[RMDB]
RNA sequence: GGGAACGACUCGAGUAGAGUCGAAAAGAGCACAUAGUCGCCGGACCAGCGCAGAUUCGACACCGACAUGUUCCAGCCCAGCACCGCCAGCGAUUCGCCGGUCCGGGCGCUCUGGGCGCCGUAGGUGAAUCCUCCCGGAUUUCGAUCCGGGAGGAUUAAAAGAAACAACAACAACAAC
Reactivity to DMS in 0.01 (KOAc 150mM, MgCl2 10mM, bicine 150mM(pH8.5), 24C), signal-to-noise 2, nucleotides 027 to 126: g000a110g010c070a060c060a080u020a060g000u020c090g020c050c000g010g000a050c040c020a060g000c050g000c140a070g000a120u000u010c030g020a130c100a050c040c000g000a050c110a050u020g020u000u000c090c020a110g000c010c010c020a070g000c070a070c060c020g000c000c030a080g030c050g000a130u020u040c030g010c000c000g000g000u000c010c050g030g000g010c010g010c080u000c020u020g000g000g000c020g000c060c050g030u020a030g000g020u050g020
Reactivity to 2A3 in 0.01 (KOAc 150mM, MgCl2 10mM, bicine 150mM(pH8.5), 24C), signal-to-noise 2, nucleotides 027 to 126: g070a020g030c050a020c040a050u140a040g070u060c030g020c080c000g000g060a030c010c000a070g040c040g050c100a030g010a110u030u040c000g000a020c020a020c030c010g050a040c020a030u100g040u040u030c040c000a000g030c030c000c000a000g000c000a000c000c010g040c030c000a020g010c050g070a130u110u070c040g000c040c000g000g030u010c030c040g040g020g000c020g000c010u050c010u010g070g030g000c000g010c010c030g070u100a020g000g090u090g060
Structure probing data (DMS and 2A3) for a 177-nucleotide construct. The DMS profile rests on 3,379 reads. The reactions ran in a buffer of 150 mM KOAc, 10 mM MgCl2 and 150 mM bicine (pH 8.5), at 24 C. 2A3 adducts were read by reverse transcription with SuperScript II with manganese. It was measured as part of the RMDB library OK1LIB.